[RMDB]
RNA sequence: GGGAACGACUCGAGUAGAGUCGAAAAGAACUCACCAGCAAAUGUUUACGACAAGAUUCGACAUUUGCAAAUUAGGUAGCGAUCUUCCAGAAUCUUGUCGAAACGUUCCCAAUCGCUACGCCCUAAAUGACAUGCACUAAUUCGUUAGUGCAUGUCAAAAAGAAACAACAACAACAAC
Reactivity to DMS in 0.01 (KOAc 150mM, MgCl2 10mM, bicine 150mM(pH8.5), 24C), signal-to-noise 2, nucleotides 027 to 126: g020a110a090c070u000c050a080c120c050a130g020c060a050a040a060u010g010u000u000u000a300c060g000a010c020a000a020g020a010u000u010c020g000a100c210a060u000u010u000g020c080a070a040a060u010u000a050g000g010u020a020g000c000g040a030u000c080u000u000c150c120a100g000a030a010u000c000u010u000g020u000c040g010a020a030a140c110g020u020u000c020c010c000a100a020u000c000g010c010u000a010c040g020c060c000c020u010a040a090a120
Reactivity to 2A3 in 0.01 (KOAc 150mM, MgCl2 10mM, bicine 150mM(pH8.5), 24C), signal-to-noise 1, nucleotides 027 to 126: g030a060a010c010u000c020a060c000c020a010g060c040a000a000a120u080g030u070u140u120a070c020g000a000c000a010a000g020a030u010u010c040g030a010c070a090u080u190u290g030c010a070a000a000u090u130a030g030g020u000a000g010c010g000a000u010c040u210u000c120c020a020g020a010a010u000c000u000u000g050u020c000g060a070a030a000c020g010u000u000c080c020c000a000a000u020c220g000c000u020a020c020g110c010c010c000u100a110a130a080